[RMDB]
RNA sequence: GGGAACGACUCGAGUAGAGUCGAAAAAGCGGCCAGCGCGGUGCUUGGGAGACACAUGCGCCCGAGGACGCUCACCGCCGCCAGCGCCUGGGCGGGACUCAGCUUUCCCAGCGCGGCGCCGCGCUCGAUAUCAAACACAAUUCGUUGUGUUUGAUAUAAAAGAAACAACAACAACAAC
Reactivity to DMS in 0.01 (KOAc 150mM, MgCl2 10mM, bicine 150mM(pH8.5), 24C), signal-to-noise 7, nucleotides 027 to 126: a080g010c050g010g000c050c120a070g000c010g020c010g000g020u010g010c010u000u010g010g010g000a030g000a040c090a130c130a200u010g000c010g000c010c010c010g020a050g010g010a080c020g000c010u000c110a140c080c030g010c020c020g030c030c270a030g000c010g000c010c000u000g020g000g000c010g000g020g000a110c140u050c140a090g010c130u000u000u000c000c000c000a060g030c210g040c160g010g010c020g020c000c010g000c030g010c000u020c090g010
Reactivity to 2A3 in 0.01 (KOAc 150mM, MgCl2 10mM, bicine 150mM(pH8.5), 24C), signal-to-noise 9, nucleotides 027 to 126: a000g040c040g030g020c050c030a040g000c130g010c020g080g010u040g010c050u120u090g040g060g000a040g020a010c060a000c010a150u160g080c020g010c020c010c010g040a060g010g010a100c010g000c010u010c020a070c010c040g010c010c000g010c020c010a010g000c000g000c000c010u010g000g010g000c000g010g020g030a060c040u050c150a030g040c050u030u030u010c000c000c000a030g020c130g020c090g100g000c010g000c000c000g000c010g000c000u020c010g010